[RMDB]
RNA sequence: GGGAACGACUCGAGUAGAGUCGAAAACUAGACGGGUUCGCCCGUCUAGAAACGGAGCGAAUAGGGGGCUUCGCCUCCGGCCCAGCCCUUCCCCUGACCCCCAAAGCUCAACCUUCGGGUUGAGCAACACACUGAUACUCUUCGGAGUAUCAGUGUGAAAAGAAACAACAACAACAAC
Reactivity to DMS in 0.01 (KOAc 150mM, MgCl2 10mM, bicine 150mM(pH8.5), 24C), signal-to-noise 3, nucleotides 027 to 126: c000u000a000g010a000c010g010g000g030u000u020c210g010c000c000c000g010u000c000u000a000g000a050a100a100c040g000g000a030g020c010g030a020a030u000a070g000g000g010g010g000c300u000u000c050g020c060c020u000c000c000g000g000c060c040c060a130g020c040c030c030u000u000c030c000c000c170u010g010a220c000c010c000c000c000a130a060a140g010c000u000c010a000a020c000c010u000u010c210g030g000g020u010u000g010a010g020c010a050a060
Reactivity to 2A3 in 0.01 (KOAc 150mM, MgCl2 10mM, bicine 150mM(pH8.5), 24C), signal-to-noise 2, nucleotides 027 to 126: c010u000a010g010a010c010g010g060g000u050u040c160g080c060c010c020g000u000c010u000a010g010a000a000a010c020g000g000a020g080c050g000a020a050u240a300g000g000g010g010g000c000u040u010c020g030c040c090u010c020c000g060g000c010c060c000a040g030c020c000c000u050u020c070c020c020c020u140g180a260c000c020c000c000c030a040a010a000g010c000u020c000a000a000c000c000u050u060c140g040g000g000u000u000g000a000g000c000a000a000